Structure probing data (DMS) for a 177-nucleotide construct. It was measured as part of the RMDB library OK2TRN. The RNA was probed in 150 mM KOAc, 10 mM MgCl2 and 150 mM bicine (pH 8.5) at 24 C. For DMS the reverse transcriptase was MarathonRT.

[RMDB]
RNA sequence: GGGAACGACUCGAGUAGAGUCGAAAAAAGGAAGUAUAGUACUUGUAGCUUGGCUAACAGUUGAGGAUUUACUAUAAUGAGCCGGGGAGUGUACUGUUUAACAGAGUAGCAAGUUUUAAGAGGAGGAACCUUUUUCGUUGUUCGCAACGAAAAAGGUAAAAGAAACAACAACAACAAC
Reactivity to DMS in 0.01 (KOAc 150mM, MgCl2 10mM, bicine 150mM(pH8.5), 24C), signal-to-noise 1, nucleotides 027 to 126: a030a050g020g010a050a090g020u010a010u000a050g010u000a030c080u000u000g000u020a140g010c010u000u000g010g020c030u000a080a110c120a070g020u030u000g010a090g000g010a100u000u000u020a070c050u000a000u020a080a100u000g030a080g050c000c070g000g000g010g020a080g030u000g010u000a020c060u000g000u010u000u000a070a090c090a030g010a100g010u000a100g000c010a050a020g000u000u000u000u000a000a080g000a080g010g030a060g000g000a090